[RMDB]
RNA sequence: GGGAACGACUCGAGUAGAGUCGAAAAGCAAAAUAAGCGAGAAAACGUAGGAGCAGCCAAUGAACACAAAAUUGUACUAUGGAGACCAGAUGAUCGCAAAAACCACCAUAAAAAUAACCGGACUUUCGAGUCCGGAAAAGAAACAACAACAACAAC
Reactivity to 2A3 in 0.01 (KOAc 150mM, MgCl2 10mM, bicine 150mM(pH8.5), 24C), signal-to-noise 1, nucleotides 027 to 135: g000c010a050a040a040a210u230a210a010g000c000g020a030g080a000a110a020a030c070g000u090a110g000g000a160g000c000a010g000c000c000a040a110u270g200a290a040c050a000c010a040a150a050a020u070u070g010u020a020c000u010a030u060g020g010a040g030a010c000c000a030g020a110u070g000a030u010c030g000c000a040a010a070a050a000c010c020a010c010c010a040u160a100a090a010a010a000u080a020a000c000c000g000g000a000c000u060u060u040c090g070a000g000u000c010c000g020g000a000

Structure probing data (2A3) for a 155-nucleotide construct.
2A3 adducts were read by reverse transcription with SuperScript II with manganese.
The data come from the RNA Mapping Database (RMDB), library P90LIB.